An RNA of 177 nucleotides, treated with 2A3 and DMS and read out base by base. Values cover nucleotides 27 to 126. It was measured as part of the RMDB library OK1LIB.
[RMDB]
RNA sequence: GGGAACGACUCGAGUAGAGUCGAAAAUGACCACUGUUUCACAGUUUCCGCUUUUUGGGCGGUGGAGCAGGCAAGGCCAUGCGGACAGCCGGGUCAAAUGCCGAAAACAAAACAAACAAAAAGAAAACGAGUUGUUGGAGUUCGCUCCAGCAACUCGAAAAGAAACAACAACAACAAC
Reactivity to 2A3 in 0.01 (KOAc 150mM, MgCl2 10mM, bicine 150mM(pH8.5), 24C), signal-to-noise 6, nucleotides 027 to 126: u170g000a010c000c000a010c020u010g010u000u010u020c040a040c020a080g040u080u130u080c040c020g050c070u140u170u110u270u260g100g010g000c020g000g010u000g010g010a010g000c010a000g000g040c050a050a060g010g000c030c000a050u150g050c000g000g020a020c010a010g000c000c000g020g000g000u020c000a020a020a040u140g000c020c010g060a060a020a010a020c080a010a060a010a020c070a040a080a010c090a070a140a020a040a020g200a060a090a000a000
Reactivity to DMS in 0.01 (KOAc 150mM, MgCl2 10mM, bicine 150mM(pH8.5), 24C), signal-to-noise 4, nucleotides 027 to 126: u050g020a020c000c000a210c010u000g000u030u000u010c010a030c000a070g050u040u020u040c050c030g010c290u000u000u020u080u010g000g020g010c080g000g000u000g030g010a000g010c010a030g020g030c280a110a060g000g010c010c020a070u020g000c000g010g000a070c070a200g000c010c000g000g000g000u020c000a080a030a090u060g020c000c000g010a230a080a090a180c190a050a060a070a080c300a070a130a100c220a060a110a100a090a190g010a130a050a100a170